[RMDB]
RNA sequence: GGGAACGACUCGAGUAGAGUCGAAAAUAAGCAUAGUACCGAAGAUAUGGAAUUGAAAAAUUGGUAGGGGAGCAUUCUAGUUGCACUGAAGGCGUAUGGCGAUGUAUGCUGGAGCGGCUAGAAAAGCACAUCCAUUAUGGUUCGCCAUAAUGGAUGUAAAAGAAACAACAACAACAAC
Reactivity to 2A3 in 0.01 (KOAc 150mM, MgCl2 10mM, bicine 150mM(pH8.5), 24C), signal-to-noise 7, nucleotides 027 to 126: u140a040a000g060c030a040u050a070g070u080a100c000c060g050a080a020g050a100u080a100u160g080g080a080a070u130u150g080a080a080a030a020a110u070u080g030g010u030a040g020g010g000g010a020g000c010a010u020u020c000u000a000g000u010u010g010c030a040c180u050g020a020a000g020g000c010g000u020a010u030g060g050c060g020a020u150g010u020a010u020g000c010u020g000g010a010g020c000g000g000c000u000a000g000a010a020a010a000g030c010
Reactivity to DMS in 0.01 (KOAc 150mM, MgCl2 10mM, bicine 150mM(pH8.5), 24C), signal-to-noise 8, nucleotides 027 to 126: u020a080a110g010c090a080u010a060g010u000a090c020c030g010a110a060g000a090u020a040u010g010g000a080a070u020u010g000a060a060a060a070a080u010u010g000g010u010a040g010g010g000g010a090g020c050a130u000u000c010u000a000g010u000u010g020c010a270c170u020g000a160a110g010g000c010g020u000a010u000g000g010c160g010a070u020g010u000a010u000g000c000u000g000g000a040g020c020g010g000c000u000a010g010a000a020a040a100g020c090